[RMDB]
Background:
Structure probing data (2A3 and DMS) for a 207-nucleotide construct. The reactions ran in a buffer of 150 mM KOAc, 10 mM MgCl2 and 150 mM bicine (pH 8.5), at 24 C. 2A3 adducts were read by reverse transcription with SuperScript II with manganese.
RNA sequence: GGGAACGACUCGAGUAGAGUCGAAAACGCUGGGUCCUACCCACCUCAACUUCGACGAUCAUCUGAAGCGCGCACGGAUGGGAGAAGGUCGGAGGGACCUGUGCUGAAGCGCGCACGGCAACCGAAAGGUGCGGAGUCGUGAGAUUCGUCUCACGAACAACAUACUAGUGUUCGCACUAGUAUGUUGAAAAGAAACAACAACAACAAC
Reactivity to 2A3 in 0.01 (KOAc 150mM, MgCl2 10mM, bicine 150mM(pH8.5), 24C), signal-to-noise 9, nucleotides 027 to 156: c010g000c010u020g010g010g000u010c010c010u070a230c020c010c010a050c010c080u290c140a200a270c060u060u040c020g250a290c010g010a070u020c000a000u000c010u030g050a200a020g020c010g000c010g000c010a010c020g000g010a010u000g020g010g020a040g010a040a020g080g050u150c140g020g030a070g040g000g000a000c000c000u010g020u020g000c000u020g020a140a040g000c000g000c000g010c000a000c010g000g000c000a010a010c000c010g060a100a040a040g000g000u010g000c010g020g040a070g100u040c010g010u010g000a000g000a010u040u160c210g080u010c070u000c010a000c000g010a020a020
Reactivity to DMS in 0.01 (KOAc 150mM, MgCl2 10mM, bicine 150mM(pH8.5), 24C), signal-to-noise 3, nucleotides 027 to 156: c050g040c020u010g030g010g030u000c030c010u000a150c020c000c050a110c110c090u010c110a120a190c040u000u010c030g020a100c130g000a080u000c050a050u000c010u000g000a030a030g040c020g020c070g000c020a300c020g010g000a060u000g000g000g010a080g030a090a040g010g010u000c050g000g020a300g020g020g010a030c010c000u000g020u000g010c030u010g000a030a040g010c020g000c020g000c000a180c030g010g030c030a050a100c030c020g000a090a070a160g010g000u000g020c030g010g000a130g010u000c000g050u000g010a020g010a070u000u000c300g020u000c000u000c000a010c000g000a020a180